[RMDB]
RNA sequence: GGGAACGACUCGAGUAGAGUCGAAAAGAAUCCCCAUGACGCUGGAAGAGACUUCCGGGUAACCAAGUCAAGGAGAAGGAACGGUAGAAAAGAGCGAGCCUCUCGAUACGAAAGGGCCGCGAGCCUAGUUCUCUUUACAGUUCGCUGUAAAGAGAACAAAAGAAACAACAACAACAAC
Reactivity to DMS in 0.01 (KOAc 150mM, MgCl2 10mM, bicine 150mM(pH8.5), 24C), signal-to-noise 2, nucleotides 027 to 126: g010a140a210u010c010c010c000c120a120u000g040a020c040g000c020u000g010g030a110a090g020a220g000a100c100u000u010c020c070g040g000g000u000a080a180c080c070a040a120g000u010c020a120a060g000g000a080g000a120a050g000g000a060a020c100g020g010u010a080g010a120a080a040a030g000a150g010c000g010a110g000c040c000u000c020u010c000g000a080u020a050c100g000a000a080a120g010g010g040c000c030g020c020g000a040g000c020c010u000a100
Reactivity to 2A3 in 0.01 (KOAc 150mM, MgCl2 10mM, bicine 150mM(pH8.5), 24C), signal-to-noise 2, nucleotides 027 to 126: g060a020a140u050c030c010c000c000a080u090g050a010c030g000c060u020g030g050a060a040g100a070g070a180c060u000u000c030c000g000g000g050u060a080a030c050c000a090a030g050u050c010a030a020g050g010a030g010a050a080g010g000a070a020c040g070g020u060a030g080a060a130a030a000g060a020g040c000g010a040g030c010c000u000c000u020c050g050a110u080a220c080g050a070a060a050g000g000g030c000c000g070c050g030a020g010c010c000u000a040
The record gives the reactivity of an RNA of 177 nucleotides to DMS and 2A3. DMS (dimethyl sulfate) methylates the pairing face of unpaired adenines and cytosines. DMS adducts were read by reverse transcription with MarathonRT.